[RMDB]
RNA sequence: GGGAACGACUCGAGUAGAGUCGAAAAGUGGGUUGUUAGAUCUGAAAUGAUAAUUCAACCAAAAGGUAAAAGUUUAACUUCAAGAGGCAUGAUAUUAUACAUGAAUAGAAAUACUAGGACCACAACCAUCUAAGAGCCAAUUCGUUGGCUCUUAGAUAAAAGAAACAACAACAACAAC
Reactivity to DMS in 0.01 (KOAc 150mM, MgCl2 10mM, bicine 150mM(pH8.5), 24C), signal-to-noise 3, nucleotides 027 to 126: g040u010g020g050g000u020u000g030u010u000a040g000a190u000c000u000g020a050a140a060u000g000a020u000a020a120u000u000c000a110a210c000c000a030a110a080a060g020g020u030a040a070a020a090g000u010u050u020a070a070c070u000u010c040a060a060g010a260g000g000c100a110u000g000a070u040a010u000u000a010u000a130c020a030u000g020a070a070u050a050g010a050a080a100u010a020c020u010a040g000g000a080c010c010a030c070a080a090c090c030
Reactivity to 2A3 in 0.01 (KOAc 150mM, MgCl2 10mM, bicine 150mM(pH8.5), 24C), signal-to-noise 5, nucleotides 027 to 126: g100u090g020g060g000u080u090g030u070u060a030g020a090u000c010u010g050a040a060a040u040g000a010u010a050a060u090u030c010a010a020c010c000a080a060a000a060g150g000u180a060a090a050a120g020u050u140u130a140a070c050u090u060c100a100a030g010a080g120g020c130a110u040g070a020u070a030u220u130a040u050a060c010a020u040g060a090a030u170a070g050a010a060a020u060a040c010u010a020g100g060a010c000c000a000c000a010a050c010c010
Chemical mapping of a 177-nucleotide RNA with DMS and 2A3. The RNA was probed in 150 mM KOAc, 10 mM MgCl2 and 150 mM bicine (pH 8.5) at 24 C. Values cover nucleotides 27 to 126. It was measured as part of the RMDB library OK1LIB.